Structure probing data (2A3) for a 177-nucleotide construct.
RNA sequence: GGGAACGACUCGAGUAGAGUCGAAAAAGACAUUUGCCUCCGCACAGGCUACUGCUUGCGUAAAGGAAAACAGUAAUGUCAUAUUACAAUGAAUACCAUGCUUUACUUCCAAUUCUCUAGCAGCUAAGGACGCCUCCUACUUCGGUAGGAGGCGUCCAAAAGAAACAACAACAACAAC
Reactivity to 2A3 in 0.01 (KOAc 150mM, MgCl2 10mM, bicine 150mM(pH8.5), 24C), signal-to-noise 1, nucleotides 027 to 126: a010g060a000c060a210u010u000u070g060c000c000u000c000c000g120c050a000c020a000g000g160c000u120a050c000u150g020c070u170u000g000c000g140u020a040a050a050g000g030a010a010a010a010c050a000g040u040a000a240u070g300u240c040a010u090a060u170u040a000c090a110a110u200g010a110a020u110a220c000c000a000u060g000c000u000u000u000a000c000u090u000c000c000a130a300u110u000c100u000c000u040a070g000c070a160g000c090u110a140a040
Values cover nucleotides 27 to 126.